[RMDB]
This 177-nucleotide RNA was probed chemically with DMS and 2A3. For DMS, 2,016 sequencing reads were counted.
RNA sequence: GGGAACGACUCGAGUAGAGUCGAAAAAACUUAAGAGCCAAUGAUGUUUUUAUUCAAAAUGUCUGAACCUGUCUGAAGCAUCCCAGUGAUGCAACUUCUGUGUGAUACUGAGGCUUUUUUGCCAAAAGUUUAUGAACAAGUUCGCUUGUUCAUAAACAAAAGAAACAACAACAACAAC
Reactivity to DMS in 0.01 (KOAc 150mM, MgCl2 10mM, bicine 150mM(pH8.5), 24C), signal-to-noise 2, nucleotides 027 to 126: a060a110c020u000u000a030a050g010a010g020c040c060a020a110u000g000a040u000g000u000u030u010u010u000a080u030u020c110a030a010a040a010u000g000u000c020u000g010a150a090c050c050u000g000u010c030u000g000a050a220g000c000a020u000c000c010c130a120g020u000g010a030u000g010c050a030a060c060u010u000c050u000g010u020g000u010g010a140u000a100c150u010g000a200g000g010c020u000u000u000u000u010u000g000c020c050a030a080a060a110
Reactivity to 2A3 in 0.01 (KOAc 150mM, MgCl2 10mM, bicine 150mM(pH8.5), 24C), signal-to-noise 1, nucleotides 027 to 126: a010a010c070u080u050a090a040g030a020g050c030c010a020a080u040g000a010u010g050u030u040u030u030u140a160u070u130c030a020a030a050a090u030g030u030c010u000g050a060a000c000c000u040g110u170c030u070g050a040a000g020c010a010u000c030c010c010a040g050u100g090a010u060g020c020a020a030c000u130u110c020u050g070u000g020u020g070a030u020a150c060u030g050a000g010g000c000u020u020u000u080u150u050g050c000c020a020a070a050a120